[RMDB]
RNA sequence: GGGAACGACUCGAGUAGAGUCGAAAAUUCAAUUUUGCCCGCUGGCUACGUGAACUUCUAUAAGGCUCGAAGUGUCGACAGGAUCGGCAACGUUUCACCCUGGACUGAUUACGCUCGCGGUAUGUCUUCGACUGACGUUAACAUCAUCACAGAUGCGCUAGGUAAUCAUCUUCGGAUGAUUACCUAGAAAAGAAACAACAACAACAAC
Reactivity to 2A3 in 0.01 (KOAc 150mM, MgCl2 10mM, bicine 150mM(pH8.5), 24C), signal-to-noise 3, nucleotides 027 to 156: u060u020c010a000a060u020u030u140u180g060c000c000c000g030c030u030g010g000c000u040a010c060g060u050g040a050a040c010u010u010c030u060a140u050a230a100g070g020c040u040c080g060a070a030g050u030g020u080c010g020a040c050a100g060g070a100u020c010g020g000c040a070a030c080g010u020u040u030c030a020c010c030c020u020g000g050a040c030u030g050a100u080u070a030c130g010c060u050c050g030c040g030g040u110a040u080g040u020c010u050u050c080g020a070c060u050g020a020c040g010u030u090a040a010c010a050u060c000a020u060c030a020c010a130g050a060u030g020c030g000
Reactivity to DMS in 0.01 (KOAc 150mM, MgCl2 10mM, bicine 150mM(pH8.5), 24C), signal-to-noise 2, nucleotides 027 to 156: u010u010c100a050a190u000u010u000u000g010c000c000c090g060c080u000g010g020c020u000a040c110g020u000g010a060a050c030u000u000c040u000a160u010a090a170g000g000c000u020c040g000a130a120g020u000g000u000c030g040a060c010a110g010g030a300u000c020g030g030c040a050a060c040g000u000u010u000c030a060c020c010c030u000g000g030a120c040u000g020a100u010u000a060c120g010c000u000c040g010c030g030g010u000a050u000g000u000c000u000u000c040g050a090c060u000g020a050c080g010u000u000a080a060c040a020u000c000a040u000c120a100c100a220g000a060u010g010c060g000